[RMDB]
RNA sequence: GGGAACGACUCGAGUAGAGUCGAAAAACUUGUUGUACUACAAGGGACAGAUUUUAUCGCUUGGCAAAUGAGUGUGCUCAGGUGCUAAGCGAAUAUGUUCUAUGUGGUGGUGGUUACUACGUCAAACCUGUAUAUGCAACUUCGGUUGCAUAUACAGAAAAGAAACAACAACAACAAC
Reactivity to DMS in 0.01 (KOAc 150mM, MgCl2 10mM, bicine 150mM(pH8.5), 24C), signal-to-noise 4, nucleotides 027 to 126: a090c050u000u000g010u000u010g020u000a040c070u010a030c030a040a300g000g000g000a040c030a020g000a130u010u000u000u020a060u010c000g010c000u010u010g000g010c010a010a030a010u010g000a000g000u010g030u020g020c000u000c000a010g010g030u000g000c000u010a010a000g010c000g010a000a010u000a060u000g000u000u000c010u010a190u010g000u000g000g010u010g010g020u000g000g000u000u000a050c070u010a080c190g000u010c090a020a080a120c170
Reactivity to 2A3 in 0.01 (KOAc 150mM, MgCl2 10mM, bicine 150mM(pH8.5), 24C), signal-to-noise 1, nucleotides 027 to 126: a000c020u030u040g020u020u060g010u160a030c040u000a010c040a120a110g020g000g000a010c020a000g090a070u050u050u040u190a150u120c000g010c000u010u000g020g000c010a020a020a040u030g000a020g030u230g040u170g190c020u000c000a000g020g030u010g000c010u000a010a010g000c010g000a010a000u010a000u000g010u000u020c030u020a090u140g040u000g000g010u010g000g010u020g010g000u050u020a060c040u000a010c010g100u020c060a060a040a060c020
About this RNA
Chemical mapping of a 177-nucleotide RNA with DMS and 2A3. Reactivities are given for positions 27 through 126. The DMS profile rests on 3,658 reads.